[RMDB]
RNA sequence: GGGAACGACUCGAGUAGAGUCGAAAAUCAUGCACGUUCGCGUGCAUGAAAAGGCGGCGACUAUCGCUCAGCGGCGCGCUACAGCGCGCAGCGCAGCUGGAAAAAGAUGAAUCUUCGGAUUCAUCAACGAGCAUACUAUCUUCGGAUAGUAUGCUCGAAAAGAAACAACAACAACAAC
Reactivity to DMS in 0.01 (KOAc 150mM, MgCl2 10mM, bicine 150mM(pH8.5), 24C), signal-to-noise 2, nucleotides 027 to 126: u010c010a000u000g020c000a020c000g000u000u010c210g030c010g020u010g020c000a010u020g000a000a070a090a060g000g000c000g010g000c040g020a190c120u030a080u020c030g010c000u000c050a070g010c020g000g000c000g030c000g020c000u010a070c220a220g020c040g010c010g020c040a010g010c100g000c110a060g020c040u000g010g010a070a130a050a140a080g000a000u010g000a000a000u000c000u000u010c180g020g000a000u010u000c000a000u000c010a030a070
Reactivity to 2A3 in 0.01 (KOAc 150mM, MgCl2 10mM, bicine 150mM(pH8.5), 24C), signal-to-noise 1, nucleotides 027 to 126: u010c000a010u000g010c010a000c000g010u030u080c180g000c010g090u000g000c000a020u010g000a030a020a000a000g070g030c020g010g030c010g050a070c110u160a110u300c080g010c050u040c040a030g000c000g010g000c000g000c000g000c040u150a160c090a070g000c020g000c010g000c020a000g030c020g000c030a020g010c000u100g050g040a060a090a000a040a050g010a000u000g000a010a000u000c000u090u120c300g060g000a010u000u000c010a000u000c000a000a030